[RMDB]
RNA sequence: GGGAACGACUCGAGUAGAGUCGAAAACGAUUACAGUCCUGUGAUAGCUGAAUUAUGAGAUCCUUCGGAGCAUGCGAAAGGAUGGGCAUGCGAAAGGAUGGUUGCCAUCCGAAACGUACGUGGCAUGCGAAAGGAUGGGUCCUCCAUCCGAAACGUACUGGGCGUAAUAUUUCGAUAUUACGCCCAGAAAAGAAACAACAACAACAAC
Reactivity to DMS in 0.01 (KOAc 150mM, MgCl2 10mM, bicine 150mM(pH8.5), 24C), signal-to-noise 1, nucleotides 027 to 156: c130g010a090u000u000a060c040a060g010u000c040c030u020g000u000g000a020u010a080g030c010u000g020a100a050u010u000a050u020g010a080g000a120u020c020c020u000u000c010g030g020a270g030c030a080u020g050c000g010a020a080a110g000g000a060u010g020g060g030c020a100u010g000c000g000a130a090a270g000g020a030u010g000g020u000u000g010c030c010a030u000c030c010g000a040a050a130c130g000u000a070c090g070u000g100g000c040a090u000g000c000g020a050a080a300g010g010a010u010g010g010g000u000c110c070u000c040c000a010u000c000c030g020a030a050a060c110g020u000a140
Reactivity to 2A3 in 0.01 (KOAc 150mM, MgCl2 10mM, bicine 150mM(pH8.5), 24C), signal-to-noise 3, nucleotides 027 to 156: c060g040a090u160u150a100c020a030g040u030c030c000u110g030u060g150a180u160a060g000c020u040g020a080a070u160u030a090u170g110a040g020a060u030c000c040u040u080c030g040g010a030g020c010a040u050g020c030g160a210a030a000g120g030a040u100g070g080g020c010a000u080g000c020g020a040a000a010g020g000a000u020g000g050u070u090g080c010c010a010u000c000c000g010a140a140a000c050g030u070a010c070g070u100g070g020c110a110u060g010c020g020a090a010a010g000g000a010u010g010g020g040u160c060c040u070c050c000a000u000c000c000g010a070a110a000c010g010u040a060